This 207-nucleotide RNA was probed chemically with DMS and 2A3. Reactivities are given for positions 27 through 156. The RNA was probed in 150 mM KOAc, 10 mM MgCl2 and 150 mM bicine (pH 8.5) at 24 C. For DMS the reverse transcriptase was MarathonRT. 2A3 adducts were read by reverse transcription with SuperScript II with manganese. It was measured as part of the RMDB library OK3TST.
RNA sequence: GGGAACGACUCGAGUAGAGUCGAAAACUGCACCAUCAGCGAUAGACCGGGGAAGCCUUUGCGCAUGUCCGUAUGGCCUGUCGCCAGCCAGACCUUCACACCACUCGGAACCGGGAUCAUCUCCGUUCCAGCACGACAUCGAGAAUGCGGCCCAGCGCAACCCCUAGAGAUUCGUCUCUAGGGGUUGAAAAGAAACAACAACAACAAC
Reactivity to DMS in 0.01 (KOAc 150mM, MgCl2 10mM, bicine 150mM(pH8.5), 24C), signal-to-noise 1, nucleotides 027 to 156: c040u000g060c040a110c030c050a100u000c050a050g060c030g010a110u000a020g010a040c030c030g020g010g010g010a180a090g000c010c030u000u000u000g050c040g070c050a070u000g000u010c020c020g000u000a060u000g010g030c010c020u010g020u000c040g000c000c030a070g040c110c040a060g000a080c030c020u000u000c020a160c020a090c070c020a130c030u000c090g000g030a040a090c030c080g000g050g000a100u000c180a160u000c110u000c020c000g000u000u000c020c010a070g010c010a070c050g020a050c050a080u000c000g020a080g000a070a090u000g010c000g010g030c000c000c000a050g030c060g000
Reactivity to 2A3 in 0.01 (KOAc 150mM, MgCl2 10mM, bicine 150mM(pH8.5), 24C), signal-to-noise 4, nucleotides 027 to 156: c040u020g020c010a050c050c030a110u090c050a020g030c010g030a030u030a050g040a020c000c010g000g020g030g060a030a040g020c040c040u220u220u160g070c170g000c020a070u140g150u090c020c010g040u100a110u220g030g000c020c020u050g000u030c020g000c010c010a010g020c020c010a030g010a060c000c010u100u100c020a040c020a040c060c000a040c020u060c070g020g010a030a010c030c100g000g000g040a070u210c060a110u080c080u020c020c000g020u030u000c010c000a010g000c040a020c070g080a060c010a060u080c040g010a000g010a100a030u120g070c020g030g010c030c010c010a030g040c080g000